[RMDB]
RNA sequence: GGGAACGACUCGAGUAGAGUCGAAAAGCCAGAGUGGAUGUUACGGAGCAGCAAUUUGCCGCGAUCACUGGAAAAACACCUUCUGAAGUUUUAACGGGGGACCAAACAUCGGCUCGUGUUCCGGUAACUAAAAGCUAGGAUUCGUCCUAGCUUUUAGAAAAGAAACAACAACAACAAC
Reactivity to 2A3 in 0.01 (KOAc 150mM, MgCl2 10mM, bicine 150mM(pH8.5), 24C), signal-to-noise 2, nucleotides 027 to 126: g040c010c020a010g020a000g060u120g080g050a060u040g000u010u060a040c030g000g040a050g000c030a000g020c000a090a140u170u160u290g020c010c010g020c000g010a040u050c020a020c060u000g000g040a050a050a010a020a010c040a070c030c000u090u060c070u110g180a190a050g030u000u050u080u120a050a010c040g000g000g000g020g020a000c000c040a060a000a010c030a030u040c000g070g000c000u010c010g050u050g030u000u000c010c000g020g040u030a060a040
Reactivity to DMS in 0.01 (KOAc 150mM, MgCl2 10mM, bicine 150mM(pH8.5), 24C), signal-to-noise 7, nucleotides 027 to 126: g020c080c020a080g010a060g020u000g000g020a060u010g000u000u000a100c140g010g010a140g020c020a030g010c070a110a160u000u000u000g020c020c020g030c070g020a120u010c040a060c060u000g000g010a080a060a040a050a050c050a080c140c120u000u010c130u020g010a090a110g010u000u000u000u000a030a210c070g010g000g000g000g000a150c040c030a070a040a070c070a050u000c010g010g000c020u000c030g010u010g010u000u000c020c010g010g020u010a050a140

The record gives the reactivity of an RNA of 177 nucleotides to 2A3 and DMS. High 2A3 reactivity points to a flexible backbone, as in loops and unpaired stretches. Reactivities are given for positions 27 through 126. The DMS profile rests on 9,222 reads. It was measured as part of the RMDB library OK2TST.